Chemical mapping of a 207-nucleotide RNA with 2A3 and DMS.
The RNA was probed in 150 mM KOAc, 10 mM MgCl2 and 150 mM bicine (pH 8.5) at 24 C.
For 2A3, 5,439 sequencing reads were counted.
For DMS the reverse transcriptase was MarathonRT.
DMS (dimethyl sulfate) methylates the pairing face of unpaired adenines and cytosines.
Values cover nucleotides 27 to 156.
[RMDB]
RNA sequence: GGGAACGACUCGAGUAGAGUCGAAAACGAUCAGUACGUUCGCGUACUGAUCGAAGCUACUGGAGACAGUAGCAAGUCUAAGACCUUGUUAGGCAGAAACAAGGAAAAAUGGAGGAAGGCCGGACCUCCAUACUUAGACAAUUGCCAACCGGCCAACCGUUUUAUAAUAUUUCGAUAUUAUAAAACGAAAAGAAACAACAACAACAAC
Reactivity to 2A3 in 0.01 (KOAc 150mM, MgCl2 10mM, bicine 150mM(pH8.5), 24C), signal-to-noise 4, nucleotides 027 to 156: c010g010a000u000c000a000g000u000a000c010g020u040u070c230g000c000g110u000a000c000u010g000a000u010c000g000a000a010g000c000u000a000c000u000g010g030a060g010a040c000a000g000u000a000g000c000a010a020g000u000c000u010a000a030g010a170c000c000u010u010g010u030u040a130g070g180c080a030g160a050a040a010c020a000a000g020g000a050a130a040a020a010u020g010g000a000g020g020a070a230g000g000c020c020g080g000a210c010c000u000c000c000a000u010a010c000u000u000a000g000a000c020a080a220u130u110g040c030c010a030a020c000c010g000g000c000c000a000a010c020
Reactivity to DMS in 0.01 (KOAc 150mM, MgCl2 10mM, bicine 150mM(pH8.5), 24C), signal-to-noise 1, nucleotides 027 to 156: c000g020a000u000c000a010g020u020a000c000g020u000u000c280g070c040g120u000a010c000u000g010a010u010c010g010a020a090g010c010u000a010c000u010g020g010a300g000a300c010a020g000u000a010g010c000a070a040g000u010c000u010a040a080g020a300c010c000u000u000g010u000u010a090g000g000c110a180g010a220a070a000c000a040a020g000g040a010a050a080a140a070u010g010g000a000g010g000a080a040g040g000c010c040g010g000a300c010c000u000c000c000a010u010a000c030u010u000a010g010a080c020a060a180u000u000g000c020c070a100a100c020c010g040g050c000c010a040a080c110